Chemical mapping of a 207-nucleotide RNA with 2A3 and DMS. For 2A3 the reverse transcriptase was SuperScript II with manganese.

[RMDB]
RNA sequence: GGGAACGACUCGAGUAGAGUCGAAAAAGGUUCGCUGUGGUGCAACUCUUAUUAGUAACUAAUGCAAAGCAAGUAUAGGAGAACAGGUUUUUAACUAUUUUUAGGCAGAUAAAAAAUAGUAUUUGACAAAAUCGAUUGUCGUUCGCGACAAUCGAAAUCUAGACCAAUAGUUCGCUAUUGGUCUAGAAAAAGAAACAACAACAACAAC
Reactivity to 2A3 in 0.01 (KOAc 150mM, MgCl2 10mM, bicine 150mM(pH8.5), 24C), signal-to-noise 2, nucleotides 027 to 156: a000g060g010u050u060c010g020c020u000g010u020g030g040u020g010c010a030a060c000u020c030u100u110a120u100u060a090g080u050a060a070c050u080a090a050u110g030c030a080a020a020g010c000a040a030g020u010a030u070a090g050g020a060g010a060a030c080a070g000g010u070u050u000u000u040a050a000c010u010a000u010u020u000u000u010a030g070g000c010a020g040a130u140a040a040a000a000a000a000u010a010g020u020a090u060u070u120g020a020c020a010a120a010a110u030c000g000a000u000u000g010u010c020g000u050u030c200g020c000g050a000c000a000a000u000c000g000a020a000a000
Reactivity to DMS in 0.01 (KOAc 150mM, MgCl2 10mM, bicine 150mM(pH8.5), 24C), signal-to-noise 1, nucleotides 027 to 156: a100g020g000u000u000c030g050c000u000g070u000g020g010u000g000c050a070a110c030u000c030u000u010a070u000u010a080g000u000a070a080c030u000a080a110u000g000c060a130a050a180g000c040a020a130g010u010a070u010a040g010g020a090g000a070a080c050a180g000g020u010u020u000u000u000a040a090c000u000a030u010u000u000u010u000a120g010g010c040a150g000a090u030a000a010a030a030a040a010u000a000g010u000a190u000u000u000g020a160c050a110a050a120a160u000c010g040a030u000u000g030u000c000g000u000u000c220g080c000g010a010c010a010a010u000c000g000a000a030a030